[RMDB]
RNA sequence: GGGAACGACUCGAGUAGAGUCGAAAAGAGCGUGAUUUCACCCUUUGCGCGGAUAUGUUCAAAUUACUCGGCGUGGAUGAAGUUCGCCUGCUGACCAAUAAUCCGAAGAAAGUCGAAAUACUGACCGCGUACUGACUCCAUUCGUGGAGUCAGUACGAAAAGAAACAACAACAACAAC
Reactivity to DMS in 0.01 (KOAc 150mM, MgCl2 10mM, bicine 150mM(pH8.5), 24C), signal-to-noise 4, nucleotides 027 to 126: g020a120g010c040g030u060g020a050u010u000u050c020a100c030c030c060u020u030u040g020c010g010c020g040g000a090u010a020u030g010u010u020c240a100a110a070u010u000a070c160u000c020g020g010c010g020u000g030g030a080u010g000a120a100g010u030u000c070g020c010c020u010g000c080u000g030a150c080c030a080a070u020a130a060u000c030c050g030a110a080g000a150a090a050g020u000c010g010a030a070a100u020a040c100u020g020a080c030c090g020
Reactivity to 2A3 in 0.01 (KOAc 150mM, MgCl2 10mM, bicine 150mM(pH8.5), 24C), signal-to-noise 6, nucleotides 027 to 126: g060a010g010c080g000u070g050a050u000u020u080c020a060c000c010c000u040u100u160g050c150g000c010g020g010a020u030a060u180g140u040u130c080a070a120a090u140u090a060c040u040c060g040g010c000g030u080g040g030a080u080g060a090a030g050u030u040c020g010c020c020u040g030c020u050g020a040c000c030a020a030u100a050a030u040c040c030g020a050a050g060a120a150a010g060u060c030g080a070a030a110u140a120c060u080g020a050c010c010g020

Chemical mapping of a 177-nucleotide RNA with DMS and 2A3. The RNA was probed in 150 mM KOAc, 10 mM MgCl2 and 150 mM bicine (pH 8.5) at 24 C. It was measured as part of the RMDB library OK1LIB. For 2A3 the reverse transcriptase was SuperScript II with manganese.